[RMDB]
Overview:
The record gives the reactivity of an RNA of 207 nucleotides to 2A3 and DMS. The RNA was probed in 150 mM KOAc, 10 mM MgCl2 and 150 mM bicine (pH 8.5) at 24 C. 2A3 is a SHAPE reagent: it acylates the 2'-hydroxyl of flexible nucleotides of all four kinds. Values cover nucleotides 27 to 156.

RNA sequence: GGGAACGACUCGAGUAGAGUCGAAAAGGGAUGGGAUCCGAAGCCCCAUUGAGGGAUAAUACAGGCUCUCCCAUCCAACUCCUAUUCCAACACGGCCUCGUCGUACAGAGUGGUAACAUGUGUCACCUAUACUAAUGACCGUUCGCGGUCAUUAGAACUAAUGCGAGUAGUUCGCUACUCGCAUUAGAAAAGAAACAACAACAACAAC
Reactivity to 2A3 in 0.01 (KOAc 150mM, MgCl2 10mM, bicine 150mM(pH8.5), 24C), signal-to-noise 3, nucleotides 027 to 156: g040g000g000a010u010g000g000g020a040u210c010c030g030a040a030g010c000c010c020c020a140u150u260g070a300g000g000g000a010u080a190a050u100a300c090a050g000g000c000u000c000u000c020c000c000a000u000c000c000a000a000c000u000c010c020u060a120u090u110c050c010a050a040c020a030c040g060g000c020c020u050c060g130u030c000g030u150a100c030a050g050a030g040u030g040g050u050a110a030c040a180u110g040u030g040u120c020a050c020c050u100a040u140a240c000u000a050a000u000g000a000c010c010g020u030u050c290g000c000g030g000u010c000a000u000u000a000g000a000a010
Reactivity to DMS in 0.01 (KOAc 150mM, MgCl2 10mM, bicine 150mM(pH8.5), 24C), signal-to-noise 1, nucleotides 027 to 156: g000g020g020a010u000g010g070g040a070u000c040c050g000a270a210g000c010c000c010c020a300u010u000g010a120g010g010g000a150u000a120a120u000a170c060a240g000g000c010u000c120u020c020c040c000a030u010c040c010a040a030c020u010c000c030u000a180u010u000c040c010a020a090c020a060c070g010g010c060c010u000c020g030u020c030g010u010a130c100a100g010a100g040u000g010g010u010a030a100c010a050u000g010u010g010u000c010a010c040c000u000a100u010a100c010u000a020a010u000g000a010c010c000g000u000u000c260g040c030g000g000u050c000a000u000u010a000g010a070a190